The record gives the reactivity of an RNA of 177 nucleotides to 2A3 and DMS.
The 2A3 profile rests on 4,438 reads.
The RNA was probed in 150 mM KOAc, 10 mM MgCl2 and 150 mM bicine (pH 8.5) at 24 C.
The DMS profile rests on 16,271 reads.
DMS (dimethyl sulfate) methylates the pairing face of unpaired adenines and cytosines.
DMS adducts were read by reverse transcription with MarathonRT.
[RMDB]
RNA sequence: GGGAACGACUCGAGUAGAGUCGAAAAGUAUGAGAUUCAACCUCAUUUUGUACAUGCAUUGCACCAGCUAAAAGAUUCGCGUUUACAGAUUGCAGAUCGUUCUGCGGAGCAGUUGGAUCAAGAGUAAUAAAUUAUCAGGAUUCGUCCUGAUAAUUUAAAAAGAAACAACAACAACAAC
Reactivity to 2A3 in 0.01 (KOAc 150mM, MgCl2 10mM, bicine 150mM(pH8.5), 24C), signal-to-noise 4, nucleotides 027 to 126: g150u100a100u180g100a070g000a160u010u070c010a010a010c000c010u010c070a110u030u070u060u050g040u010a020c020a050u020g050c030a020u000u130g030c030a060c040c030a090g030c060u110a080a100a020a050g100a070u140u140c090g000c020g010u020u020u000a030c020a010g060a060u050u160g040c010a000g030a110u110c080g220u300u050c030u010g020c010g020g000a010g000c050a040g030u040u030g020g000a010u010c020a020a020g060a010g130u070a030a160
Reactivity to DMS in 0.01 (KOAc 150mM, MgCl2 10mM, bicine 150mM(pH8.5), 24C), signal-to-noise 9, nucleotides 027 to 126: g020u010a050u010g010a170g000a140u000u000c050a040a040c050c020u020c020a130u000u000u000u010g010u010a030c070a030u000g010c030a100u010u010g010c070a110c130c130a110g010c070u000a060a060a100a100g000a130u010u010c110g020c030g020u000u000u000a040c060a050g000a060u010u010g000c020a020g000a050u010c240g000u010u010c020u000g020c020g010g010a030g010c090a060g010u000u000g010g000a040u000c020a050a120g010a130g000u010a070a120